[RMDB]
RNA sequence: GGGAACGACUCGAGUAGAGUCGAAAAGUCGACUUUCAACAACGCAUGUUCCAAGGUGUUGUUGCGCAUGAUUGCAAGAACCCAUUUGCCGGUGGAGCAGAACAGGUAUACGACGAUAUCGCCGAGGCACUCCGGUAGCUUUCGAGCUACCGGAGUGAAAAGAAACAACAACAACAAC
Reactivity to 2A3 in 0.01 (KOAc 150mM, MgCl2 10mM, bicine 150mM(pH8.5), 24C), signal-to-noise 4, nucleotides 027 to 126: g120u070c010g080a040c050u000u110u100c090a060a050c010a000a070c010g000c030a030u160g080u160u080c050c020a020a090g100g000u020g000u000u010g030u000u040g010c030g050c030a080u120g010a140u140u110g040c030a050a040g040a070a090c040c000c000a020u110u080u120g050c040c010g100g010u050g000g050a010g020c020a020g030a040a020c030a050g050g010u080a090u030a100c120g040a000c030g020a030u040a010u170c060g020c010c010g030a100g060g000
Reactivity to DMS in 0.01 (KOAc 150mM, MgCl2 10mM, bicine 150mM(pH8.5), 24C), signal-to-noise 2, nucleotides 027 to 126: g020u060c020g040a080c060u000u000u020c060a090a020c050a020a070c110g020c120a090u000g000u000u000c010c060a160a060g000g000u000g000u000u000g040u000u000g010c300g000c120a090u010g000a090u020u000g000c000a000a040g010a180a190c020c010c000a040u000u020u000g000c060c040g000g020u030g000g000a120g000c090a110g000a110a090c170a110g040g000u000a100u000a030c080g000a160c000g060a170u030a070u000c010g020c020c030g000a090g000g000
Source information:
Chemical mapping of a 177-nucleotide RNA with 2A3 and DMS. Values are in units of 0.01, from 0 to 300, in steps of 10. 2A3 adducts were read by reverse transcription with SuperScript II with manganese.